[RMDB]
RNA sequence: GGGAACGACUCGAGUAGAGUCGAAAAAACCCUGUUGUGUACAUGCAUAGGAACACAUUCUGGCAAACACAAUAUGGGUACACACGUGUACAAACACAAGUCUGUAAGCCAUGGAUAUGAAUAUCCUUCAGUGUGGUGUACAUAUACUAUAUGUAUGACCCAGAAGCAUAUUCGUAUGCUUCUGGGUAAAAGAAACAACAACAACAAC
Reactivity to 2A3 in 0.01 (KOAc 150mM, MgCl2 10mM, bicine 150mM(pH8.5), 24C), signal-to-noise 2, nucleotides 027 to 156: a010a020c000c000c000u000g010u010u040g000u000g010u020a010c020a050u020g000c050a070u040a170g080g020a120a040c150a000c000a260u110u070c000u000g000g000c020a020a200a000c000a000c020a050a000u020a070u080g040g000g050u070a010c010a010c010a000c000g020u010g020u000a140c110a180a290a000c020a020c020a040a100g050u020c050u030g240u160a040a070g060c090c050a050u080g000g000a010u040a020u200g130a200a040u140a010u130c000c000u000u070c020a100g020u000g010u030g080g020u030g000u020a000c000a030u100a000u050a050c040u090a040u060a030u210g030u000a040u000g010
Reactivity to DMS in 0.01 (KOAc 150mM, MgCl2 10mM, bicine 150mM(pH8.5), 24C), signal-to-noise 2, nucleotides 027 to 156: a030a050c020c010c000u020g020u000u000g010u000g030u000a060c150a160u000g040c000a170u000a090g060g020a110a300c130a060c020a160u000u000c030u010g020g010c030a070a260a070c010a010c010a070a110u000a080u000g020g020g020u000a010c070a040c050a060c230g030u000g020u000a080c020a070a050a130c020a000c040a020a170g030u000c060u020g000u000a120a300g000c030c030a070u000g030g010a040u000a060u000g000a110a060u000a090u000c040c020u000u000c040a180g000u000g020u000g000g010u000g030u010a020c020a010u000a080u000a080c180u000a120u010a080u000g010u000a080u020g000

Source information: Conditions: 150 mM KOAc, 10 mM MgCl2 and 150 mM bicine (pH 8.5), 24 C. This 207-nucleotide RNA was probed chemically with 2A3 and DMS. The DMS profile rests on 2,854 reads. For 2A3 the reverse transcriptase was SuperScript II with manganese.